[RMDB]
RNA sequence: GGGAACGACUCGAGUAGAGUCGAAAAUAGAUACCAGCCACUUUGGGGAUCGAUAUGAGAGAACAAAAAUGAGAUUGUGUACAUGUGCACACUUCCAUAGGUGACACCUAGCAGAGGGUGGCAGAUGAUACAGGUAAUGACCCACCUCACAUGGUGCACUCAAGCAAUGUUUCGACAUUGCUUGAGUAAAAGAAACAACAACAACAAC
Reactivity to DMS in 0.01 (KOAc 150mM, MgCl2 10mM, bicine 150mM(pH8.5), 24C), signal-to-noise 2, nucleotides 027 to 156: u000a120g010a200u000a100c000c010a180g000c010c040a080c100u020u000u000g010g010g010g000a060u010c040g010a160u000a060u000g000a100g000a080g000a080a150c040a010a060a050a120a140u000g010a070g020a050u000u000g000u010g060u000a070c030a100u000g000u020g020c020a050c000a060c030u000u000c030c030a080u000a030g020g030u010g010a090c040a260c040c030u000a060g020c080a110g000a050g000g000g030u020g000g010c030a080g000a080u000g010a140u000a040c100a040g030g010u000a060a120u000g000a110c000c000c040a090c110c010u010c040a020c050a030u000g010g020u000g020c070
Reactivity to 2A3 in 0.01 (KOAc 150mM, MgCl2 10mM, bicine 150mM(pH8.5), 24C), signal-to-noise 4, nucleotides 027 to 156: u140a000g080a020u050a090c000c040a020g060c060c020a120c100u200u120u090g020g000g010g020a070u060c040g030a010u020a100u240g090a110g000a010g050a080a020c070a050a120a030a030a040u170g020a080g030a090u120u070g030u000g000u020a030c030a050u080g030u040g040c020a000c000a010c080u110u020c040c010a070u020a060g100g000u040g040a010c010a070c070c030u070a040g050c030a030g080a110g020g030g010u020g020g000c050a030g020a100u120g020a010u080a130c040a030g080g020u080a140a090u100g060a040c010c000c020a020c000c010u050c010a010c000a040u080g000g030u010g020c030